[RMDB]
RNA sequence: GGGAACGACUCGAGUAGAGUCGAAAACGUACGUGGAGACACGUACGACGAGACUUCGGUCUCGAAUCGCAUGAACUUGGGCCAUGCUCGCGCGAGGCGUCGGUGCUCGGCGAGCGCACGGACGCAAAAACUCGCGCGAAAAUAAAUAGCUUAAGAAGAUUAUAAUGGACUUCGGUCCAUUAUAAUCAAAAGAAACAACAACAACAAC
Reactivity to DMS in 0.01 (KOAc 150mM, MgCl2 10mM, bicine 150mM(pH8.5), 24C), signal-to-noise 1, nucleotides 027 to 156: c010g000u020a000c000g020u080g000g000a300g010a300c000a000c000g020u000a020c020g080a160c000g000a300g010a000c020u000u000c100g040g010u000c010u000c020g030a020a080u020c050g010c000a060u000g010a040a080c000u000u010g020g010g050c030c010a050u000g010c100u010c010g010c040g070c020g040a050g000g000c000g000u010c000g040g080u010g000c010u000c030g050g080c080g010a180g030c070g020c000a020c000g020g020a080c000g020c120a050a070a070a040a300c010u000c020g010c020g020c000g010a010a000a060a050u000a110a100a080u000a100g020c020u020u000a010a080g020a110a200
Reactivity to 2A3 in 0.01 (KOAc 150mM, MgCl2 10mM, bicine 150mM(pH8.5), 24C), signal-to-noise 3, nucleotides 027 to 156: c000g010u000a000c000g010u000g000g030a070g020a030c000a000c000g010u000a000c000g000a030c020g000a000g000a000c020u110u160c290g060g000u000c010u000c000g010a040a110u180c090g000c010a000u020g020a180a200c010u010u010g020g000g000c010c000a000u000g000c030u020c020g000c000g000c000g000a020g020g030c020g020u000c060g160g000u010g000c020u030c040g120g050c300g070a070g010c000g000c000a000c020g130g000a000c000g000c020a080a090a080a060a170c000u000c000g010c000g000c000g000a000a000a000a000u030a000a030a010u110a000g000c010u010u010a030a000g020a100a020
Conditions: 150 mM KOAc, 10 mM MgCl2 and 150 mM bicine (pH 8.5), 24 C. Structure probing data (DMS and 2A3) for a 207-nucleotide construct. The DMS profile rests on 1,733 reads. Source: RMDB library OK3TST, as collected in RNAgym. For 2A3 the reverse transcriptase was SuperScript II with manganese. DMS adducts were read by reverse transcription with MarathonRT. The 2A3 profile rests on 2,659 reads.